This 207-nucleotide RNA was probed chemically with 2A3 and DMS.
The 2A3 profile rests on 2,902 reads.
RNA sequence: GGGAACGACUCGAGUAGAGUCGAAAAACAUAUUACGAUAUGAUUCAGAUGGUGUCUUACUGGUUCGUACCAUGGGACAUAAUGGUUUCUUGUUUCCAACCAAAGAACAAGUGGCGAGCCUGAAUAAAAAACUGACUGCCGUUCGCGGCAGUCAGAACUAGAUUAGAAAGUUCGCUUUCUAAUCUAGAAAAGAAACAACAACAACAAC
Reactivity to 2A3 in 0.01 (KOAc 150mM, MgCl2 10mM, bicine 150mM(pH8.5), 24C), signal-to-noise 4, nucleotides 027 to 156: a010c020a010u120a040u090u130a040c060g050a030u030a030u100g100a070u100u150c070a060g090a170u160g080g050u030g010u010c010u030u070a120c120u050g010g050u040u190c100g060u150a030c000c010a010u010g020g000g040a010c020a020u110a080a100u050g000g000u010u020u000c010u010u020g020u030u030u030c020c010a060a100c020c010a080a060a030g010a010a010c010a020a000g010u030g060g010c010g010a020g010c000c040u020g080a050a030u140a090a090a020a010a010a030c000u000g000a000c000u010g000c030c000g050u060u060c220g000c010g070g000c000a000g000u000c000a000g000a000a000
Reactivity to DMS in 0.01 (KOAc 150mM, MgCl2 10mM, bicine 150mM(pH8.5), 24C), signal-to-noise 1, nucleotides 027 to 156: a070c040a100u000a090u000u010a110c100g000a160u000a050u010g000a080u000u010c040a100g010a130u000g050g030u000g000u000c010u000u000a070c110u000g010g000u010u010c160g000u000a100c020c010a040u000g030g010g030a060c030a050u000a090a110u000g020g010u000u000u000c020u000u000g010u000u000u010c020c000a050a090c120c050a060a100a110g020a060a070c050a060a120g030u000g000g000c040g000a110g010c030c040u010g010a040a100u050a040a110a090a100a060a170c010u010g000a010c000u000g000c040c000g010u000u000c300g050c060g000g030c000a000g030u010c000a000g000a020a090
The reactions ran in a buffer of 150 mM KOAc, 10 mM MgCl2 and 150 mM bicine (pH 8.5), at 24 C. Source: RMDB library M2RFPK, as collected in RNAgym. For 2A3 the reverse transcriptase was SuperScript II with manganese.